[RMDB]
RNA sequence: GGGAACGACUCGAGUAGAGUCGAAAAGCAGUUUCAGAAAAGCUAUCAACCAAGCCACCAAACACAUCCGUCCUACAGCAUUGGCCCCGUUGACGGUAUUGUCGGCAACGGUACACUACUGGCACUAGGCGUAUGAUGACUUCGGUCAUCAUACGCCAAAAGAAACAACAACAACAAC
Reactivity to 2A3 in 0.01 (KOAc 150mM, MgCl2 10mM, bicine 150mM(pH8.5), 24C), signal-to-noise 1, nucleotides 027 to 126: g100c050a000g000u020u100u070c120a150g130a000a080a000a060g000c060u090a000u160c060a000a020c010c070a000a000g000c010c000a060c000c000a000a000a000c060a000c000a200u060c040c000g020u010c000c000u050a090c060a010g000c000a010u020u090g110g070c000c010c010c010g080u050u020g000a000c030g000g000u050a240u110u300g090u110c020g000g020c040a000a000c000g020g000u020a030c000a020c000u200a000c000u000g000g060c020a020c190u070a030